Structure probing data (2A3) for a 177-nucleotide construct. Values cover nucleotides 27 to 126. For 2A3, 634 sequencing reads were counted. The RNA was probed in 150 mM KOAc, 10 mM MgCl2 and 150 mM bicine (pH 8.5) at 24 C. For 2A3 the reverse transcriptase was SuperScript II with manganese. It was measured as part of the RMDB library RFM100.

RNA sequence: GGGAACGACUCGAGUAGAGUCGAAAAACAGCAUACGUGCUGACAGCGGGUGCCAGGCACGGUGUCAGCAGGCAACAUGGCCGAGAGGCCGGGGCCUCCGGGCGGCGCCGUGUCCGCGACCGCGUAAAACGACGUUGCGAUUCGUCGCAACGUCGUUAAAAGAAACAACAACAACAAC
Reactivity to 2A3 in 0.01 (KOAc 150mM, MgCl2 10mM, bicine 150mM(pH8.5), 24C), signal-to-noise 1, nucleotides 027 to 126: a000c000a000g000c040a020u080a080c100g130u080g000c030u110g080a100c030a020g010c010g040g000g100u280g000c010c030a060g010g000c030a000c000g020g000u000g010u040c010a020g000c000a010g030g000c020a040a050c020a300u090g000g050c000c000g100a070g000a000g060g000c000c000g050g000g000g000c060c020u000c050c000g300g060g020c050g000g000c000g000c000c000g000u020g000u000c020c010g000c050g050a000c010c000g000c000g010u030a090a050